[RMDB]
RNA sequence: GGGAACGACUCGAGUAGAGUCGAAAAGCGGGUAACUUCGGUUACCCGCAAAGACGCGUCUCGUCGCGUCGCCGUCGCGUCGCGGCCCGUCGCGUCGCGAGAAAAGGACGAAGUUCGCUUCGUCCAACCACUGUAAGUUCUUCGGAACUUACAGUGGAAAAGAAACAACAACAACAAC
Reactivity to DMS in 0.01 (KOAc 150mM, MgCl2 10mM, bicine 150mM(pH8.5), 24C), signal-to-noise 2, nucleotides 027 to 126: g000c000g040g000g010u000a000a000c000u010u020c190g040g000u000u000a000c000c000c000g040c000a010a020a070g000a010c000g000c000g000u000c130u010c300g000u000c000g000c000g000u000c010g010c110c220g010u000c050g010c000g000u000c000g020c010g010g000c010c030c050g010u020c010g000c000g010u010c000g000c070g010a080g000a060a050a110a100g000g000a020c030g000a000a000g000u000u010c210g010c000u000u000c000g020u000c000c000a000a050
Reactivity to 2A3 in 0.01 (KOAc 150mM, MgCl2 10mM, bicine 150mM(pH8.5), 24C), signal-to-noise 3, nucleotides 027 to 126: g010c010g000g010g010u020a010a010c000u060u100c180g060g010u030u000a000c000c010c000g010c000a000a000a000g010a000c000g020c000g020u020c010u030c160g130u130c000g000c010g000u020c000g020c050c070g250u090c110g000c000g000u010c000g020c000g000g030c040c000c000g140u190c010g000c000g010u020c000g000c020g010a070g050a010a100a020a040g020g000a000c000g000a000a000g020u050u140c180g060c110u000u000c000g000u000c000c000a000a000